[RMDB]
RNA sequence: GGGAACGACUCGAGUAGAGUCGAAAAUACCUGCAGAAGGUCCCUGUCGAAGCCGUCCAGCCGGGCUUUUCGCUGGCCAUUCCACACGAUGGCGACUAUCGCCUUUUCCAGGUCGACUGCACGCAAACUUAAGGUGAGGAUUCGUCCUCACCUUAAGAAAAGAAACAACAACAACAAC
Reactivity to DMS in 0.01 (KOAc 150mM, MgCl2 10mM, bicine 150mM(pH8.5), 24C), signal-to-noise 5, nucleotides 027 to 126: u000a100c010c030u000g010c190a080g010a140a100g030g010u000c040c040c020u020g010u000c070g000a060a100g020c040c020g020u000c040c080a080g020c030c070g020g000g000c060u010u010u020u000c100g010c060u000g010g010c030c040a080u000u000c040c070a080c110a090c110g010a060u000g000g010c020g000a100c090u000a100u000c060g010c020c010u000u000u000u000c100c040a080g000g020u000c040g010a050c040u000g010c070a070c090g010c100a090a070a210
Reactivity to 2A3 in 0.01 (KOAc 150mM, MgCl2 10mM, bicine 150mM(pH8.5), 24C), signal-to-noise 1, nucleotides 027 to 126: u090a040c000c000u030g000c030a060g060a300a000g000g000u030c000c000c000u030g040u010c050g050a070a020g040c020c020g000u030c000c030a000g110c100c000g120g000g090c100u050u020u090u070c060g030c040u040g020g010c000c030a050u080u000c060c030a080c040a030c170g080a070u060g010g060c000g000a050c070u120a080u290c070g000c000c000u090u120u050u000c040c010a010g000g030u030c000g060a020c020u020g040c020a040c030g040c080a080a050a120